This 177-nucleotide RNA was probed chemically with 2A3 and DMS.
The DMS profile rests on 2,890 reads.
For 2A3 the reverse transcriptase was SuperScript II with manganese.
For DMS the reverse transcriptase was MarathonRT.
The RNA was probed in 150 mM KOAc, 10 mM MgCl2 and 150 mM bicine (pH 8.5) at 24 C.
Source: RMDB library OK1LIB, as collected in RNAgym.
Reactivities are given for positions 27 through 126.

[RMDB]
RNA sequence: GGGAACGACUCGAGUAGAGUCGAAAAAACACCAACAACACGGUCGGGCUGCCUUGCUGAGGGGUGGAUUGGUGGGUAGGAUAGCCAGUGAGUUUCUGAGCGUCGACGAUGGGCUGGCUGGCCCCUCCUUGAGUCGACUGUUCGCAGUCGACUCAAGAAAAGAAACAACAACAACAAC
Reactivity to 2A3 in 0.01 (KOAc 150mM, MgCl2 10mM, bicine 150mM(pH8.5), 24C), signal-to-noise 2, nucleotides 027 to 126: a000a000c100a050c050c010a030a090c040a000a030c060a010c100g060g030u030c010g030g030g040c060u060g080c010c000u070u060g010c030u030g040a090g020g000g040g020u070g020g010a090u050u100g000g030u050g000g090g040u050a040g000g010a030u040a100g020c000c000a020g010u020g050a030g000u040u070u160c010u060g050a020g020c050g180u190c050g020a130c000g010a020u090g010g030g030c000u000g040g000c000u000g050g010c000c000c000c010u000c030
Reactivity to DMS in 0.01 (KOAc 150mM, MgCl2 10mM, bicine 150mM(pH8.5), 24C), signal-to-noise 2, nucleotides 027 to 126: a050a040c110a080c020c030a090a060c230a110a100c120a090c080g010g000u010c100g010g030g040c110u020g000c050c050u010u010g010c080u030g030a130g000g000g000g000u030g000g010a100u020u020g000g000u020g020g000g000u000a050g000g000a050u030a080g040c000c020a000g000u010g000a080g000u000u000u030c000u000g000a300g020c040g000u040c110g020a160c060g000a240u000g000g070g000c030u010g000g000c000u030g000g000c000c010c050c030u000c020